[RMDB]
RNA sequence: GGGAACGACUCGAGUAGAGUCGAAAAUUGAUAGCUACCUUUACAAAGCUAUCCGCCAGAGAACUACUAGCCAGAGCUUAAAACUUAAAGGACUUGGCGGUGCUUUAUAUCCACCUAGGGGAGCCUGGCUGCUCUUUCAUUUCGAUGAAAGAGCAGCAAAAGAAACAACAACAACAAC
Reactivity to DMS in 0.01 (KOAc 150mM, MgCl2 10mM, bicine 150mM(pH8.5), 24C), signal-to-noise 1, nucleotides 027 to 126: u070u000g030a020u000a030g000c000u010a060c120c010u070u010u050a050c130a100a060a050g040c000u000a000u000c000c130g020c000c030a070g000a080g030a110a130c170u000a190c220u000a000g020c000c000a050g020a150g000c080u010u000a070a210a080a110c130u000u080a040a200a080g050g000a090c030u000u000g000g020c000g000g000u000g000c080u000u020u000a080u030a010u080c110c010a050c010c050u030a040g050g020g050g000a000g000c040c030u000g000
Reactivity to 2A3 in 0.01 (KOAc 150mM, MgCl2 10mM, bicine 150mM(pH8.5), 24C), signal-to-noise 2, nucleotides 027 to 126: u060u080g060a030u030a060g000c000u040a160c020c010u050u120u040a130c170a010a050a040g000c000u050a040u000c020c000g010c000c020a010g000a020g000a300a090c070u060a000c030u030a090g020c010c020a070g020a010g070c070u130u110a000a280a000a040c030u060u100a140a000a020g040g000a050c010u020u040g010g000c010g000g030u020g000c000u000u100u010a150u010a000u070c020c000a020c050c030u040a040g000g070g000g000a000g020c000c000u000g020